RNA sequence: GGGAACGACUCGAGUAGAGUCGAAAAGAUAUGGAGCGAUACGACAUGCACUCUGUUCGGAAACGAACAACGUGAGUGCAACAGCGUAUUCGCUCCUAAGUCAAAGGUGUUUGUUCGCAAACACCAAGAUAGGAUGACGGUUCGCCGUCAUCCUAUCAAAAGAAACAACAACAACAAC
Reactivity to 2A3 in 0.01 (KOAc 150mM, MgCl2 10mM, bicine 150mM(pH8.5), 24C), signal-to-noise 3, nucleotides 027 to 126: g020a020u030a010u110g000g000a010g020c000g000a000u000a020c040g040a060c140a230u300g010c000a000c000u000c010u020g010u010u030c000g010g000a020a030a010c000g000a010a020c030a100a040c270g300u130g050a010g010u010g000c010a000a000c040a000g000c000g000u010a020u120u170c010g000c010u000c010c000u000a010a000g000u000c040a060a080a120g000g000u010g020u000u010u010g090u040u130c300g000c180a010a000a000c000a000c000c000a010a030
Reactivity to DMS in 0.01 (KOAc 150mM, MgCl2 10mM, bicine 150mM(pH8.5), 24C), signal-to-noise 3, nucleotides 027 to 126: g010a050u000a190u000g000g000a020g020c000g000a020u000a000c000g000a060c080a300u000g010c000a000c000u000c000u000g000u000u000c000g010g000a080a050a100c000g020a030a010c000a040a100c300g030u020g000a000g000u000g010c010a060a040c150a140g010c000g010u000a010u010u030c020g010c000u000c000c000u000a000a070g000u010c030a100a110a080g000g020u000g020u000u000u000g010u000u010c250g000c000a030a000a000c000a000c000c000a040a050